[RMDB]
RNA sequence: GGGAACGACUCGAGUAGAGUCGAAAACGCGUGCUUGCAUCAUCGGGAGACUUGGCCGUGGCGUCGUCUAACUUUGCCCGUUACGUGGUGGCCGCUUCGCUGCCCCGUUACCCGCAAAUCAUCGAGCUAACCCUUCAGGUUUCGACCUGAAGGGUUAAAAAGAAACAACAACAACAAC
Reactivity to 2A3 in 0.01 (KOAc 150mM, MgCl2 10mM, bicine 150mM(pH8.5), 24C), signal-to-noise 2, nucleotides 027 to 126: c030g010c030g080u070g030c040u120u080g060c000a020u040c010a010u090c080g000g050g020a110g000a050c030u090u070g040g000c000c010g100u060g060g000c030g040u030c010g030u030c080u070a080a060c040u130u070u110g020c040c000c000g060u040u040a040c020g000u030g000g020u000g050g000c000c000g020c010u060u070c030g000c020u030g030c000c000c000c000g050u050u040a130c030c010c020g080c040a030a040a050u100c080a060u100c060g010a000g010c010
Reactivity to DMS in 0.01 (KOAc 150mM, MgCl2 10mM, bicine 150mM(pH8.5), 24C), signal-to-noise 2, nucleotides 027 to 126: c090g000c090g010u000g010c030u000u000g010c070a100u000c070a080u000c020g020g020g000a100g020a050c070u010u000g030g020c030c040g040u000g020g010c090g020u020c070g020u010c040u000a060a110c100u000u010u010g010c020c020c060g010u000u000a030c090g000u010g000g010u000g000g040c010c050g000c120u000u000c060g000c020u000g000c000c000c020c010g000u000u010a070c020c010c050g010c110a060a040a070u000c150a090u010c080g010a110g000c110

The record gives the reactivity of an RNA of 177 nucleotides to 2A3 and DMS. The data come from the RNA Mapping Database (RMDB), library OK2TRN. 2A3 adducts were read by reverse transcription with SuperScript II with manganese. The 2A3 profile rests on 1,877 reads.